[RMDB]
RNA sequence: GGGAACGACUCGAGUAGAGUCGAAAAGAAAGAAAGAAGCAGUCAAUUCCCUUUUCGUUCGCUCCACAUGUCAAUCGUUGAUUCGAGUACGAAUGACAAGUGCAGAUGGCGAGAAGGUAGACUCCAAAUAUGAGGGAGGGUUCGCCCUCCCUCAUAUAAAAGAAACAACAACAACAAC
Reactivity to DMS in 0.01 (KOAc 150mM, MgCl2 10mM, bicine 150mM(pH8.5), 24C), signal-to-noise 3, nucleotides 027 to 126: g000a110a110a060g000a060a030a050g010a030a130g010c190a020g000u010c020a110a180u030u000c180c040c000u010u000u010u020c000g020u010u020c030g010c020u010c110c000a000c020a110u030g000u010c000a050a050u000c010g000u000u000g000a200u050u020c220g020a150g010u020a000c030g010a000a030u000g000a030c000a040a040g020u000g000c230a300g000a030u000g000g020c000g000a000g000a020a030g000g000u000a220g000a020c000u010c040c050a070a060
Reactivity to 2A3 in 0.01 (KOAc 150mM, MgCl2 10mM, bicine 150mM(pH8.5), 24C), signal-to-noise 4, nucleotides 027 to 126: g130a010a020a000g130a030a110a020g080a090a030g050c130a010g000u010c010a060a150u210u220c000c000c000u000u000u000u000c100g030u150u220c080g010c030u100c080c000a010c010a010u020g000u000c010a030a110u010c020g010u040u080g150a250u260u190c110g050a040g120u190a000c010g010a000a020u030g000a000c000a010a040g000u000g020c000a080g100a230u080g010g010c000g000a000g000a010a000g030g020u000a020g010a010c010u010c020c000a010a200

Source: RMDB libraries RFM100 and RFMREP, as collected in RNAgym. Chemical mapping of a 177-nucleotide RNA with DMS and 2A3. The reactions ran in a buffer of 150 mM KOAc, 10 mM MgCl2 and 150 mM bicine (pH 8.5), at 24 C. For 2A3 the reverse transcriptase was SuperScript II with manganese. For DMS the reverse transcriptase was MarathonRT.